[RMDB]
RNA sequence: GGGAACGACUCGAGUAGAGUCGAAAAUUAAGUCACGAUAAUCAAUAGGAGAAAUCAAUAUGAUCGUUUCUGACAUCGAAGCUAACGCCCUCUUAGAGAGCGUCACUAAGUUCCACUGCGGGGUUAUCUACGACUACUCCACCGCUGAGUACGUAAGGCAUAGUGAGCAAUUCGUUGCUCACUAUGCAAAAGAAACAACAACAACAAC
Reactivity to 2A3 in 0.01 (KOAc 150mM, MgCl2 10mM, bicine 150mM(pH8.5), 24C), signal-to-noise 4, nucleotides 027 to 156: u170u080a130a000g030u060c000a010c090g080a080u080a060a070u140c050a060a120u070a120g120g020a060g070a100a100a070u070c070a060a080u090a130u240g080a090u050c020g020u010u040u060c050u050g040a010c000a040u080c050g070a040a000g060c060u030a050a000c000g050c030c020c000u010c070u100u130a030g020a020g020a010g060c010g000u010c010a000c060u090a090a030g030u040u050c030c000a050c010u070g000c030g010g020g000g000u030u060a020u060c020u050a020c040g050a050c010u030a010c010u040c010c030a230c060c060g020c120u050g000a000g070u050a060c060g020u030a060a070g060
Reactivity to DMS in 0.01 (KOAc 150mM, MgCl2 10mM, bicine 150mM(pH8.5), 24C), signal-to-noise 2, nucleotides 027 to 156: u000u000a050a150g010u000c030a070c060g030a080u000a040a080u000c060a090a070u000a110g010g010a080g020a090a090a140u000c050a120a110u000a110u010g000a060u000c060g030u000u020u000c010u000g010a060c040a190u000c110g000a080a100g020c040u000a040a000c000g010c000c000c000u000c010u000u000a170g000a000g000a000g020c030g020u000c060a040c070u010a040a150g010u000u000c050c000a070c080u010g000c020g020g000g010g020u000u000a040u000c060u030a080c050g020a060c000u000a060c020u020c010c010a200c050c060g000c000u000g010a090g000u000a080c080g020u000a060a100g000